[RMDB]
The data come from the RNA Mapping Database (RMDB), library OK2TST. An RNA of 177 nucleotides, treated with 2A3 and DMS and read out base by base.

RNA sequence: GGGAACGACUCGAGUAGAGUCGAAAAGCCAACGCAAUUGACCAUUCUGAGGGCAAACCCGUCACCUUGCUGUGCCGUGAAAAUGACGAGGCUGUAUCCGUCGCGGUUAUCGACCACGGGGUGGGCCGAUGAUACGGCUAUUCGUAGCCGUAUCAUCAAAAGAAACAACAACAACAAC
Reactivity to 2A3 in 0.01 (KOAc 150mM, MgCl2 10mM, bicine 150mM(pH8.5), 24C), signal-to-noise 6, nucleotides 027 to 126: g030c000c010a050a010c060g040c060a050a120u090u130g060a090c020c020a040u070u000c040u100g040a150g010g030g000c010a030a030a090c010c000c000g030u030c010a040c010c020u060u130g010c070u070g080u100g010c010c010g050u070g070a060a050a050a110u150g020a020c020g040a060g060g000c080u080g080u110a090u040c050c020g020u020c020g000c030g040g050u070u070a110u150c040g040a050c020c010a020c030g020g000g010g020u030g030g020g000c040c050
Reactivity to DMS in 0.01 (KOAc 150mM, MgCl2 10mM, bicine 150mM(pH8.5), 24C), signal-to-noise 6, nucleotides 027 to 126: g010c010c020a080a120c140g000c130a060a080u000u010g010a090c080c050a120u000u000c050u010g000a160g020g010g010c040a050a090a100c050c010c020g010u010c040a070c030c040u000u010g010c150u000g010u010g020c030c020g020u000g010a030a060a060a070u010g000a050c060g000a110g000g010c050u010g010u010a100u010c050c040g000u000c030g010c080g000g010u000u000a080u000c080g030a090c020c030a080c040g000g010g000g020u000g010g010g010c120c110

For DMS the reverse transcriptase was MarathonRT.